RNA sequence: GGGAACGACUCGAGUAGAGUCGAAAAUAACUUGCAGCGAAGCUUAUCGAAUGGUAAAUAACAGUAGAUAAGAACGUUCAACGACUAGAAAGUGAAGAUUACCAACUAAUAAACUUUCCACGAGCGCAUGCGAAGAUUUUUUCGAAAAUCUUCGCAUAAAAGAAACAACAACAACAAC
Reactivity to 2A3 in 0.01 (KOAc 150mM, MgCl2 10mM, bicine 150mM(pH8.5), 24C), signal-to-noise 9, nucleotides 027 to 126: u080a010a060c040u030u110g020c060a020g010c010g010a120a010g020c010u000u000a010u010c010g100a180a060u060g040g020u180a150a190a110u210a200a050c020a010g040u060a010g030a010u000a000a010g010a070a020c010g010u020u020c050a080a040c040g080a020c030u050a040g030a030a020a010g030u050g030a060a040g020a140u060u080a080c030c040a060a090c050u040a020a090u050a100a080a020c000u010u020u000c030c030a050c060g040a050g040c060g000c060
Reactivity to DMS in 0.01 (KOAc 150mM, MgCl2 10mM, bicine 150mM(pH8.5), 24C), signal-to-noise 7, nucleotides 027 to 126: u010a070a090c100u000u020g030c120a070g010c020g000a110a150g000c020u000u000a010u000c010g000a100a250u010g000g010u010a050a090a100u050a100a110c110a040g000u010a140g000a000u000a010a010g000a120a110c030g010u010u020c060a080a090c110g010a080c100u000a080g000a040a020a010g010u000g010a060a060g000a140u010u000a070c070c080a040a160c130u020a030a070u020a080a070a060c020u000u000u000c010c070a080c090g000a090g010c100g010c160
The record gives the reactivity of an RNA of 177 nucleotides to 2A3 and DMS. Conditions: 150 mM KOAc, 10 mM MgCl2 and 150 mM bicine (pH 8.5), 24 C. It was measured as part of the RMDB libraries RFM100 and RFMREP. Values cover nucleotides 27 to 126.